Structure probing data (2A3 and DMS) for a 207-nucleotide construct. For 2A3 the reverse transcriptase was SuperScript II with manganese. Reactivities are given for positions 27 through 156. It was measured as part of the RMDB library OK3TST. For 2A3, 16,140 sequencing reads were counted. The reactions ran in a buffer of 150 mM KOAc, 10 mM MgCl2 and 150 mM bicine (pH 8.5), at 24 C.
RNA sequence: GGGAACGACUCGAGUAGAGUCGAAAAACAAGGCAGGUACUGUGUACUGUCCUCUGCGUGCAAGGAAGGCCAGCGCAUGCAACAGAGUCCACACAGACAUAGCCUAACUCUGGAAGGAAGAAUGAGAAUGCAGUUUCAGUGGUGGCCUCUGGUGGGGCAUGUUAUGUCAUUUCGAUGACAUAACAUGAAAAGAAACAACAACAACAAC
Reactivity to 2A3 in 0.01 (KOAc 150mM, MgCl2 10mM, bicine 150mM(pH8.5), 24C), signal-to-noise 9, nucleotides 027 to 156: a000c060a040a030g030g000c020a020g080g020u130a170c030u040g000u020g010u110a060c030u050g070u090c000c050u030c020u020g040c060g020u030g000c020a050a080g060g080a090a080g100g080c040c030a050g010c020g000c050a020u060g000c020a050a040c010a040g030a010g050u030c070c020a010c000a000c010a030g040a020c020a070u150a020g000c000c010u030a040a030c030u020c030u080g070g040a040a050g070g020a030a030g050a070a070u160g010a040g030a100a020u080g020c020a020g010u000u060u150c030a020g020u030g050g020u020g010g020c000c000u010c020u030g020g000u020g000g000g010g000
Reactivity to DMS in 0.01 (KOAc 150mM, MgCl2 10mM, bicine 150mM(pH8.5), 24C), signal-to-noise 4, nucleotides 027 to 156: a060c040a080a080g020g000c050a100g010g010u000a110c050u010g030u000g030u000a100c030u020g000u000c050c020u020c040u000g020c050g060u010g040c060a120a100g020g020a150a090g010g020c020c030a300g010c070g000c040a130u000g010c030a100a080c030a040g000a050g020u010c040c070a090c070a090c020a050g010a070c040a080u000a100g010c030c020u000a040a060c030u000c020u000g010g010a090a090g020g020a090a070g000a070a070u010g020a140g000a060a070u000g020c030a070g020u000u000u000c050a070g020u000g010g020u000g040g020c030c010u000c020u000g000g050u000g000g010g000g000